[RMDB]
RNA sequence: GGGAACGACUCGAGUAGAGUCGAAAAAAGACGUUCGCGUCUUGUCAAGAUAUGGACCAUUUGUCAGCGUGCCAUAGGCAUCGAUCUCGGAAACGAGGGAGCCUAGGCGGACGCUUGGAUUUAAUGGUCCUAAGUCAUAUCAGGUUUUCGAACCUAACAUUAUUCCCUGCUUCGGCAGGGAAUAAUGAAAAGAAACAACAACAACAAC
Reactivity to DMS in 0.01 (KOAc 150mM, MgCl2 10mM, bicine 150mM(pH8.5), 24C), signal-to-noise 1, nucleotides 027 to 156: a040a010g030a010c000g040u000u030c260g000c050g050u000c010u010u010g030u000c070a180a190g000a130u000a270u000g010g000a020c010c000a030u020u010u010g030u000c020a050g020c020g030u000g040c000c030a160u000a000g010g010c010a160u000c170g010a050u000c000u000c000g000g010a180a150a250c000g010a030g000g000g010a050g020c000c010u010a030g000g040c130g050g000a010c040g050c000u000u000g060g020a000u000u000u000a050a050u000g010g000u000c010c000u000a020a030g010u010c060a170u000a080u000c060a050g030g000u000u000u000u000c170g000a010a070c030c020u010a080a220
Reactivity to 2A3 in 0.01 (KOAc 150mM, MgCl2 10mM, bicine 150mM(pH8.5), 24C), signal-to-noise 3, nucleotides 027 to 156: a000a000g020a010c030g020u050u040c280g020c050g140u000c010u010u010g120u090c130a150a080g010a070u030a000u170g010g010a020c000c010a000u020u020u040g030u010c010a000g000c020g040u060g020c020c040a250u010a010g000g010c020a170u300c060g130a090u060c010u000c010g040g030a100a050a070c020g010a010g020g010g010a010g000c000c000u000a000g000g050c060g050g070a010c020g000c030u060u130g070g010a010u250u230u230a020a020u000g000g000u000c000c000u000a000a010g010u000c010a020u080a090u300c060a030g010g060u050u040u100u120c130g070a010a020c000c010u010a050a020